[RMDB]
Chemical mapping of a 207-nucleotide RNA with 2A3.
RNA sequence: GGGAACGACUCGAGUAGAGUCGAAAACAUUUUAGACUGGGCAUAGUGGCUCACACCCGUAAUCCCAGCACUUUGGGAGGCCAAGGCAGUUGGAUCACUUGAGGUCAGAAGUUCAAGACCAGCCUGGCCAACAUGGUGAAACCCCUAUCUCUACUAACGCAUGGUAUCAUUUCGAUGAUACCAUGCGAAAAGAAACAACAACAACAAC
Reactivity to 2A3 in 0.01 (KOAc 150mM, MgCl2 10mM, bicine 150mM(pH8.5), 24C), signal-to-noise 2, nucleotides 027 to 156: c040a120u070u070u070u240a250g080a300c040u030g000g000g000c060a010u020a240g030u070g050g020c000u010c070a070c010a020c000c000c000g100u110a020a030u010c000c000c000a000g110c010a100c130u180u160u010g040g000g000a010g000g000c020c010a020a010g000g000c010a030g000u150u150g010g010a090u030c120a160c140u000u000g010a000g000g220u150c080a030g040a130a090g100u180u070c030a040a050g000a050c000c010a000g000c000c000u000g000g060c000c000a010a010c030a030u030g070g030u010g070a010a030a010c010c000c010c000u040a040u030c030u020c000u020a080c030u000a050a040

The data come from the RNA Mapping Database (RMDB), library OK3TST.